[RMDB]
Chemical mapping of a 177-nucleotide RNA with 2A3 and DMS.
RNA sequence: GGGAACGACUCGAGUAGAGUCGAAAAGAAAAGAGCGUAAUCGCGUCUUGACGUGAGUGAGGCUAGACUGUAGUCUAUCCCAAGUGGGAUAGGAUACCUCACAAUACGCUGAUCUACAGUCAAAAGACCUAUGACCAUGAUUCGUCAUGGUCAUAGGAAAAGAAACAACAACAACAAC
Reactivity to 2A3 in 0.01 (KOAc 150mM, MgCl2 10mM, bicine 150mM(pH8.5), 24C), signal-to-noise 9, nucleotides 027 to 126: g190a010a080a010a010g010a000g000c000g000u010a040a050u050c010g000c010g030u020c100u150u240g130a030c000g010u010g010a030g000u000g000a000g010g000c010u040a060g000a000c000u000g000u010a000g010u010c000u000a000u010c010c000c020a140a170g280u300g040g000g000a000u000a000g000g010a030u040a040c000c000u000c000a000c000a000a010u040a010c010g000c010u020g020a030u020c000u000a000c000a000g000u000c010a010a040a000a030g090a020
Reactivity to DMS in 0.01 (KOAc 150mM, MgCl2 10mM, bicine 150mM(pH8.5), 24C), signal-to-noise 4, nucleotides 027 to 126: g020a100a070a120a020g000a020g010c000g010u000a050a300u010c000g030c000g000u000c050u040u030g010a020c010g000u000g000a050g000u000g010a000g000g000c090u000a040g000a030c010u020g010u000a010g000u010c000u000a010u010c000c000c000a300a160g010u070g000g000g000a010u020a020g010g000a110u030a050c030c010u000c010a020c020a130a180u000a010c000g030c000u010g000a060u020c000u010a000c000a020g010u000c010a200a070a050a080g020a180

The reactions ran in a buffer of 150 mM KOAc, 10 mM MgCl2 and 150 mM bicine (pH 8.5), at 24 C. For 2A3, 24,791 sequencing reads were counted. Values cover nucleotides 27 to 126.